[RMDB]
RNA sequence: GGGAACGACUCGAGUAGAGUCGAAAAUUUUAUCGGAACCUUAUCUGGGGCAGUGAAGUAUAUGUUAUGGUAAUAGUUACGAGUUAGUUGAACUUAUAGAUAGACUGGACUAUACGGCUAUCGGUCCUGUUCGUCUCAAGUUCGCUUGAGACGAACAAAAAGAAACAACAACAACAAC
Reactivity to DMS in 0.01 (KOAc 150mM, MgCl2 10mM, bicine 150mM(pH8.5), 24C), signal-to-noise 1, nucleotides 027 to 126: u000u010u010u010a040u010c040g000g000a110a200c040c060u000u010a040u000c080u030g010g000g000g020c050a060g020u000g010a120a160g010u000a050u000a060u010g000u000u010a040u010g000g020u010a050a070u000a180g020u000u000a060c070g020a070g000u010u000a100g020u000u020g000a070a120c080u000u000a200u010a020g010a100u000a130g050a030c030u000g020g010a040c070u000a120u020a100c050g000g020c060u000a030u010c070g020g020u010c030c020
Record summary: This 177-nucleotide RNA was probed chemically with DMS. Reactivities are given for positions 27 through 126. The data come from the RNA Mapping Database (RMDB), library OK2TRN. The reactions ran in a buffer of 150 mM KOAc, 10 mM MgCl2 and 150 mM bicine (pH 8.5), at 24 C.